[RMDB]
RNA sequence: GGGAACGACUCGAGUAGAGUCGAAAAGGGGUCGAGACAUGCAAGGACCAGAGCGACGAUCUAUACUGAAGCCUCCACGGUAUAGGGAGCUCUGUGUCCUUGCAACAGCUCGACGGAGGCACCCAAACCGAUGAGACUGUUCGCAGUCUCAUCGGAAGUAGUACAUACCGUUCGCGGUAUGUACUACAAAAGAAACAACAACAACAAC
Reactivity to DMS in 0.01 (KOAc 150mM, MgCl2 10mM, bicine 150mM(pH8.5), 24C), signal-to-noise 1, nucleotides 027 to 156: g000g020g060g010u010c000g000a020g000a050c070a200u010g020c010a020a030g020g020a040c000c000a020g000a010g050c000g010a110c240g020a050u000c000u000a050u000a010c000u000g010a040a130g010c020c000u000c000c020a300c010g010g000u000a030u000a010g020g020g000a010g010c000u030c000u000g010u020g020u010c000c000u000u010g000c020a020a030c050a070g020c010u000c020g010a020c000g000g040a040g170g070c010a180c020c000c010a070a080a190c020c000g030a020u000g010a030g000a060c010u000g000u010u000c280g040c010a000g000u000c000u010c000a020u010c010g000g020a020a030
Reactivity to 2A3 in 0.01 (KOAc 150mM, MgCl2 10mM, bicine 150mM(pH8.5), 24C), signal-to-noise 6, nucleotides 027 to 156: g010g020g080g030u010c010g010a010g000a030c280a270u300g000c000a010a000g000g000a010c000c000a000g000a000g000c000g300a300c000g000a010u000c000u000a000u000a000c000u030g050a110a020g000c000c000u000c000c000a000c000g000g000u000a000u000a000g000g000g000a000g000c010u030c030u040g000u050g000u020c000c000u000u010g000c010a010a000c010a000g000c000u000c000g000a000c000g000g000a000g000g000c000a050c000c000c010a020a040a060c000c000g010a000u000g000a000g010a000c010u000g030u090u160c300g020c150a000g000u000c000u000c000a000u000c000g000g000a010a020